Description:
The data come from the RNA Mapping Database (RMDB), library OK2TRN. The record gives the reactivity of an RNA of 177 nucleotides to DMS and 2A3. DMS adducts were read by reverse transcription with MarathonRT. High 2A3 reactivity points to a flexible backbone, as in loops and unpaired stretches. 2A3 adducts were read by reverse transcription with SuperScript II with manganese.
[RMDB]
RNA sequence: GGGAACGACUCGAGUAGAGUCGAAAAGGCGUCUUCGCUGCCUCGGCCGCCUUGCACUGACCGGUAGCCGCCGUAAUGGCGGCAUUGUUCCCAUAAAUGGAUGUGGGUGUGGGUGUCGAAGUAGCAGAUACUACGCAUAUUUCGAUAUGCGUAGUAUAAAAGAAACAACAACAACAAC
Reactivity to DMS in 0.01 (KOAc 150mM, MgCl2 10mM, bicine 150mM(pH8.5), 24C), signal-to-noise 9, nucleotides 027 to 126: g010g010c080g010u000c060u010u010c130g020c010u000g010c020c020u000c020g010g000c030c050g020c010c010u000u000g030c040a030c020u000g010a080c040c040g000g010u010a140g020c000c000g020c000c000g010u010a130a100u020g010g020c010g010g010c000a000u000u000g000u000u000c000c000c000a140u010a050a090a130u010g010g000a100u010g030u000g010g010g020u000g020u000g000g000g020u000g010u000c020g010a030a040g020u000a040g020c030a190g010
Reactivity to 2A3 in 0.01 (KOAc 150mM, MgCl2 10mM, bicine 150mM(pH8.5), 24C), signal-to-noise 8, nucleotides 027 to 126: g080g030c070g090u040c080u150u090c090g020c010u010g010c010c000u010c000g010g000c030c040g040c030c000u040u160g000c010a010c020u070g110a060c010c030g050g030u060a040g000c000c000g000c000c000g030u120a120a130u240g000g000c000g000g000c000a000u010u030g000u020u010c000c000c010a020u130a020a140a050u150g080g030a050u100g040u130g180g020g000u010g000u030g010g040g010u060g010u010c010g000a010a000g010u020a010g010c010a000g020